[RMDB]
RNA sequence: GGGAACGACUCGAGUAGAGUCGAAAAGAUAUGGAAUCUCUGUGAGGCGACGAUCGACAAUCGGAAACGAUUGUCGGGAGCCUACAGAAGAUUCCUAAGUCAAAACGCCAAAGUUCGCUUUGGCGAACAUUCGGGUUUAGUUCGCUAAACCCGAAUGAAAAGAAACAACAACAACAAC
Reactivity to DMS in 0.01 (KOAc 150mM, MgCl2 10mM, bicine 150mM(pH8.5), 24C), signal-to-noise 2, nucleotides 027 to 126: g000a030u010a240u000g010g000a020a020u000c010u000c010u010g020u030g000a080g020g000c000g000a080c300g000a020u010c000g000a030c000a000a000u010c000g010g010a070a030a070c000g010a030u000u010g000u010c000g000g000g000a040g020c010c030u000a020c000a020g000a090a110g010a010u010u000c000c000u000a010a100g000u010c010a070a090a110a270c020g000c000c000a020a000a040g010u000u000c280g020c010u000u000u020g010g020c030g000a050a080
Reactivity to 2A3 in 0.01 (KOAc 150mM, MgCl2 10mM, bicine 150mM(pH8.5), 24C), signal-to-noise 1, nucleotides 027 to 126: g000a000u000a020u020g000g010a000a000u000c010u000c010u030g060u060g280a300g060g000c000g010a300c000g010a190u010c000g010a020c000a000a010u010c000g000g000a040a000a010c000g000a010u000u000g000u000c020g000g000g010a010g000c010c010u010a000c020a000g020a030a000g000a000u000u010c000c000u010a020a000g000u000c030a000a100a140a090c020g000c000c000a050a000a000g050u090u210c300g010c200u020u040u040g000g060c000g010a030a000

Structure probing data (DMS and 2A3) for a 177-nucleotide construct. The RNA was probed in 150 mM KOAc, 10 mM MgCl2 and 150 mM bicine (pH 8.5) at 24 C.